[RMDB]
RNA sequence: GGGAACGACUCGAGUAGAGUCGAAAACGAUCUGUUCGCAGAUCGAGCUACGGAGACGUAGCAAAGCGAGCGAGGACCUGGGCGCUCGCCCUACCGGAAAUGUAACCAUAUCCACGUGUGCUAGGAUAUGGCCAGGUCCAAAGAAACAGCACACGAAUACAGAGAGAAUAUUCGUAUUCUCUCUGUAAAAAGAAACAACAACAACAAC
Reactivity to 2A3 in 0.01 (KOAc 150mM, MgCl2 10mM, bicine 150mM(pH8.5), 24C), signal-to-noise 3, nucleotides 027 to 156: c010g000a000u000c000u000g020u030u060c170g010c050a000g000a000u000c010g010a010g000c000u000a010c000g010g010a040g010a020c000g000u000a000g000c010a000a060a000g000c010g000a000g000c000g000a010g000g010a010c000c010u010g000g010g020c020g000c000u000c010g000c010c000c000u030a040c000c010g100g050a050a020a060u140g040u120a030a070c000c000a000u000a000u000c000c000a040c070g000u000g000u000g000c010u030a020g000g000a000u000a000u000g000g000c000c000a010g000g000u000c000c000a030a050a000g050a010a070a000c040a010g000c010a000c000a000c000g010a040a010
Reactivity to DMS in 0.01 (KOAc 150mM, MgCl2 10mM, bicine 150mM(pH8.5), 24C), signal-to-noise 2, nucleotides 027 to 156: c020g000a000u010c020u010g030u000u010c300g020c000a060g010a010u010c020g020a140g000c020u000a010c000g010g010a300g010a300c010g050u010a030g000c000a080a050a060g010c010g000a020g010c000g020a090g020g010a040c000c030u020g000g010g020c020g000c010u000c030g020c010c010c020u000a270c030c000g030g000a110a080a110u010g010u020a120a080c010c000a020u000a020u010c010c020a100c040g000u000g020u000g020c010u000a140g000g010a040u000a010u000g010g030c010c000a030g020g030u000c000c100a070a090a160g020a120a100a100c130a060g000c000a010c010a000c040g020a160a200